[RMDB]
RNA sequence: GGGAACGACUCGAGUAGAGUCGAAAAUAAUACAAAACUUGGUUGUGUUGGAGAAAGUGUGCUAAGAACUUUACAUGCAUUGUCUCAUCUCCGUUCUUGCUAAAGGAUCUAACUUUUCCUUCCAACCAUCCAGCAACUACUAGCGAGGCAUCAACUAUGACUGAUGAUAGUUCGCUAUCAUCAGUCAAAAAGAAACAACAACAACAAC
Reactivity to 2A3 in 0.01 (KOAc 150mM, MgCl2 10mM, bicine 150mM(pH8.5), 24C), signal-to-noise 3, nucleotides 027 to 156: u040a000a020u110a050c060a050a090a080a060c040u050u080g000g000u010u030g020u020g010u090u000g010g010a010g090a010a070a020g120u100g010u060g040c040u080a060a020g040a020a030c030u100u210u160a030c070a090u060g060c010a020u060u080g090u050c050u000c050a130u080c130u020c040c000g020u040u010c000u000u030g010c030u070a070a030a000g060g040a100u040c020u060a000a040c010u040u010u010u010c000c000u050u020c040c000a000a000c000c000a010u030c000c000a000g020c010a040a050c010u130a040c010u040a090g060c000g020a030g020g040c040a100u090c020a100a040c030u120a080
Reactivity to DMS in 0.01 (KOAc 150mM, MgCl2 10mM, bicine 150mM(pH8.5), 24C), signal-to-noise 2, nucleotides 027 to 156: u000a120a140u000a300c090a090a030a080a080c090u000u000g030g000u000u000g000u010g020u010u000g010g010a130g010a050a050a080g010u000g040u000g040c090u000a100a080g030a080a070c020u000u000u010a090c040a080u000g000c060a090u020u000g030u010c020u000c100a130u000c040u010c040c080g000u000u010c010u020u000g020c100u000a080a050a050g020g000a110u000c030u000a080a060c070u010u000u000u000c020c040u030u000c010c070a020a030c000c020a040u010c040c030a050g000c050a050a110c040u000a060c060u000a050g020c070g020a090g030g040c010a110u010c050a040a090c090u000a120
Description
Conditions: 150 mM KOAc, 10 mM MgCl2 and 150 mM bicine (pH 8.5), 24 C. The record gives the reactivity of an RNA of 207 nucleotides to 2A3 and DMS. For 2A3 the reverse transcriptase was SuperScript II with manganese. The DMS profile rests on 4,457 reads.